[RMDB]
RNA sequence: GGGAACGACUCGAGUAGAGUCGAAAAAGCGGUCUUGGUCUUGCACACAACGGUAAGCCAGUGGUAAUGUCAGUGCAAGAAGGAUAUUACCAUAGCACUGUCACGAGGGGAACGCAGUACCUUUUCAAGAUUGAAUCCAGUUCGCUGGAUUCAAUCUAAAAGAAACAACAACAACAAC
Reactivity to 2A3 in 0.01 (KOAc 150mM, MgCl2 10mM, bicine 150mM(pH8.5), 24C), signal-to-noise 3, nucleotides 027 to 126: a000g030c020g010g010u000c040u030u060g080g030u020c000u010u030g040c020a030c000a000c000a060a230c090g070g040u110a060a060g010c020c010a070g010u040g010g000u010a010a020u020g020u020c020a020g010u020g130c040a060a040g020a050a040g120g010a000u020a040u040u030a060c000c000a010u030a010g080c070a010c030u020g030u040c040a000c070g010a110g000g020g020g030a080a020c040g000c020a020g010u050a060c010c000u030u070u040u120c050a050
Reactivity to DMS in 0.01 (KOAc 150mM, MgCl2 10mM, bicine 150mM(pH8.5), 24C), signal-to-noise 3, nucleotides 027 to 126: a060g000c010g020g000u010c030u020u000g010g010u030c010u000u040g000c000a020c060a050c090a120a110c140g000g020u010a080a070g000c070c070a070g010u000g020g000u010a030a020u010g030u020c020a050g010u010g010c110a030a080g000a030a040g000g000a050u000a010u030u010a070c000c010a070u030a120g000c110a080c020u000g000u010c050a100c080g010a090g000g000g000g000a030a050c080g000c050a060g000u020a080c030c000u000u000u010u030c130a070